Source information
The record gives the reactivity of an RNA of 177 nucleotides to DMS and 2A3.
RNA sequence: GGGAACGACUCGAGUAGAGUCGAAAAGAUAUGGAGGACUUGUCAGUGAACCAAGUACGUUGAAAACAGAAUCGGAAACGAUUCUGUUGGAGUAUGAGGUUCACUUGGAUUUAGUCCUCCUAAGUCACAUUAACAUGUCGUUCGCGACAUGUUAAUGAAAAGAAACAACAACAACAAC
Reactivity to DMS in 0.01 (KOAc 150mM, MgCl2 10mM, bicine 150mM(pH8.5), 24C), signal-to-noise 4, nucleotides 027 to 126: g010a050u000a300u010g000g010a020g020g010a010c000u000u000g000u000c010a030g030u010g000a010a010c010c010a030a300g000u000a000c010g020u000u020g000a210a100a010a000c010a020g000a000a010u010c000g020g000a120a120a250c010g020a020u000u000c000u000g000u000u000g000g010a030g010u000a010u000g000a300g010g000u000u010c000a000c000u000u010g020g020a030u000u000u000a010g010u000c010c000u000c000c000u000a000a070g000u000c010a230
Reactivity to 2A3 in 0.01 (KOAc 150mM, MgCl2 10mM, bicine 150mM(pH8.5), 24C), signal-to-noise 2, nucleotides 027 to 126: g000a020u090a060u250g010g000a000g000g000a010c020u040u010g000u020c010a020g010u010g000a000a010c000c010a000a040g010u020a010c080g220u300u100g040a030a040a000a000c010a000g010a010a000u010c000g020g000a040a070a090c030g000a020u000u000c020u010g000u000u000g000g000a010g010u000a010u070g010a000g000g020u000u000c000a000c000u010u010g010g010a000u080u250u100a020g010u010c000c000u000c010c000u000a000a000g020u000c020a010
Source: RMDB library TTRINS, as collected in RNAgym. The reactions ran in a buffer of 150 mM KOAc, 10 mM MgCl2 and 150 mM bicine (pH 8.5), at 24 C.